[RMDB]
RNA sequence: GGGAACGACUCGAGUAGAGUCGAAAACUCGGUUAAUUCGUUAACCGAGACUUCUUAAACAUCUUUUCAACACAUAGAUGGUAAAUAUUCAAAGAUCUUCGAAUGCGAUAAACUUCGGUUUAUCGAACGGGUAUAUUUACUUCGGUAAAUAUACCCGAAAAGAAACAACAACAACAAC
Reactivity to DMS in 0.01 (KOAc 150mM, MgCl2 10mM, bicine 150mM(pH8.5), 24C), signal-to-noise 2, nucleotides 027 to 126: c000u000c000g000g000u000u000a020a020u000u000c230g000u000u000a000a000c000c010g010a000g010a010c100u000u000c010u000u000a040a060a120c020a010u000c000u000u000u030u000c090a100a070c240a080c220a060u000a030g010a050u000g010g000u000a070a060a030u000a090u010u000c140a050a100a110g010a060u000c070u000u010c120g000a090a070u030g020c040g000a010u000a000a010a020c000u000u010c170g030g010u000u000u000a000u000c000g000a030a090
Reactivity to 2A3 in 0.01 (KOAc 150mM, MgCl2 10mM, bicine 150mM(pH8.5), 24C), signal-to-noise 2, nucleotides 027 to 126: c000u000c000g000g000u000u030a000a020u050u050c110g030u060u010a010a010c010c000g010a000g000a010c020u050u040c020u060u140a180a110a010c000a000u000c030u050u070u130u150c110a100a080c050a020c010a140u080a080g030a020u010g000g010u030a060a130a060u210a100u110u060c030a010a080a080g070a170u040c050u100u120c120g120a130a030u140g060c000g010a000u010a000a000a000c010u020u040c110g080g000u010u000u020a000u000c000g000a010a000